[RMDB]
RNA sequence: GGGAACGACUCGAGUAGAGUCGAAAAAACUCUUUAAGGCAAUAACGAACUAAUUCUAAGCAAGUAAUGGAGAAAUGCCAGGGUCACUAUCUAGCCAUAAUCGUGCUUGACAGUAUGAUACUAACUGAAUAUGGUAAACCGUUCGCGGUUUACCAAAUCUUCUCAAGAUGUUCGCAUCUUGAGAAGAAAAAGAAACAACAACAACAAC
Reactivity to DMS in 0.01 (KOAc 150mM, MgCl2 10mM, bicine 150mM(pH8.5), 24C), signal-to-noise 1, nucleotides 027 to 156: a060a010c020u000c040u010u000u020a190a090g010g000c040a090a100u010a080a090c040g000a070a100c080u000a030a130u000u000c060u000a090a090g010c030a020a090g040u010a070a080u000g000g020a110g010a030a160a090u010g030c060c020a150g000g070g050u010c020a020c010u020a060u000c050u010a090g040c010c010a080u000a100a090u000c120g100u000g010c000u000u000g030a050c000a080g010u000a080u000g030a110u000a040c050u000a050a070c040u050g000a140a140u010a140u000g010g020u020a000a010a020c020c000g070u000u000c300g070c050g080g010u010u000u000a000c000c000a000a000a080
Reactivity to 2A3 in 0.01 (KOAc 150mM, MgCl2 10mM, bicine 150mM(pH8.5), 24C), signal-to-noise 2, nucleotides 027 to 156: a000a000c170u140c000u100u170u010a050a010g030g000c020a130a130u080a150a050c060g040a030a030c020u030a030a080u110u180c060u120a080a000g050c040a090a110g040u150a070a040u140g010g030a040g050a120a040a030u030g000c000c060a000g020g030g020u010c000a000c050u030a040u060c000u020a000g030c000c020a030u070a050a040u160c050g020u030g050c010u030u060g040a000c010a020g040u100a090u120g050a020u050a150c030u080a090a040c020u020g050a060a080u180a120u150g010g000u000a000a000a000c010c000g050u060u020c110g030c040g110g000u000u000u020a000c000c000a000a000a000

Conditions: 150 mM KOAc, 10 mM MgCl2 and 150 mM bicine (pH 8.5), 24 C. Chemical mapping of a 207-nucleotide RNA with DMS and 2A3. The data come from the RNA Mapping Database (RMDB), library M2RFPK. For 2A3 the reverse transcriptase was SuperScript II with manganese. High DMS reactivity at an A or C suggests that its Watson-Crick edge is free. Values cover nucleotides 27 to 156.